[RMDB]
RNA sequence: GGGAACGACUCGAGUAGAGUCGAAAAAGGAGCCGGUCUACUCUCUGGAACGAGUGGACUUCUGCCAAACGAGACCCGUCUAUGAUGGGAAGAAAUGGAGGAUGGUGCGCCACAUUACCAGCGUCGCAACAUUAACUCCAUUCGUGGAGUUAAUGUUAAAAGAAACAACAACAACAAC
Reactivity to 2A3 in 0.01 (KOAc 150mM, MgCl2 10mM, bicine 150mM(pH8.5), 24C), signal-to-noise 9, nucleotides 027 to 126: a000g110g010a030g030c030c030g020g000u000c010u010a020c000u010c010u010c110u180g120g070a120a050c070g010a020g010u010g000g020a010c000u040u010c020u050g030c010c000a080a060a030c050g020a020g080a080c010c010c000g000u010c040u120a200u300g040a020u040g020g020g030a060a060g060a060a140a020u140g030g010a020g050g010a040u090g040g030u070g030c030g010c020c000a050c010a050u050u090a060c020c030a020g030c020g080u070c040g020c050
Reactivity to DMS in 0.01 (KOAc 150mM, MgCl2 10mM, bicine 150mM(pH8.5), 24C), signal-to-noise 9, nucleotides 027 to 126: a070g000g010a080g020c080c140g010g020u000c000u010a030c030u000c000u010c130u030g020g010a140a150c210g010a030g010u000g010g010a030c010u010u020c050u040g000c010c010a040a080a120c160g010a160g000a120c020c010c010g010u010c030u030a100u040g000a040u010g010g000g000a080a060g000a060a070a070u010g000g010a060g000g000a060u010g000g000u010g010c040g000c010c030a050c080a080u020u020a090c070c040a080g010c070g000u010c070g020c120
Chemical mapping of a 177-nucleotide RNA with 2A3 and DMS.
The DMS profile rests on 36,106 reads.
Conditions: 150 mM KOAc, 10 mM MgCl2 and 150 mM bicine (pH 8.5), 24 C.